[RMDB]
Source information: Structure probing data (2A3 and DMS) for a 177-nucleotide construct. The reactions ran in a buffer of 150 mM KOAc, 10 mM MgCl2 and 150 mM bicine (pH 8.5), at 24 C. The 2A3 profile rests on 2,937 reads. Source: RMDB library OK2TRN, as collected in RNAgym.
RNA sequence: GGGAACGACUCGAGUAGAGUCGAAAAUGAGGCCGGCUGGCACCUGUCUUCAGCCGGCAGGCAGAGGCUGGGGCACCCGUUAGCCAAUGGCACAGUGGAGGGGGCUCCUGUGGGUGUGAGGCUGAGACUAUACAGGUUACUUCGGUAACCUGUAUAGAAAAGAAACAACAACAACAAC
Reactivity to 2A3 in 0.01 (KOAc 150mM, MgCl2 10mM, bicine 150mM(pH8.5), 24C), signal-to-noise 2, nucleotides 027 to 126: u110g030a030g000g100c000c010g000g040c020u020g000g040c060a070c060c070u080g070u130c060u060u070c030a010g000c000c000g000g000c000a010g020g000c030a010g030a070g030g030c070u050g040g010g010g000c020a050c000c030c000g040u050u110a030g020c020c030a120a200u190g050g030c010a010c040a100g110u130g080g080a130g000g020g000g040g000c000u010c020c000u030g010u080g020g000g010u060g020u080g030a020g030g000c050u040g010a020g020a050
Reactivity to DMS in 0.01 (KOAc 150mM, MgCl2 10mM, bicine 150mM(pH8.5), 24C), signal-to-noise 6, nucleotides 027 to 126: u010g020a160g000g010c000c000g010g010c010u000g010g000c180a120c150c090u010g010u010c090u010u000c020a020g010c000c000g010g010c030a010g000g010c120a060g000a170g010g010c100u000g000g010g000g010c020a030c020c010c010g000u010u010a130g010c010c030a090a110u010g020g020c050a100c130a080g020u000g010g010a200g000g000g010g000g010c020u000c020c000u000g010u000g010g010g000u000g000u000g000a160g010g000c080u000g000a100g010a250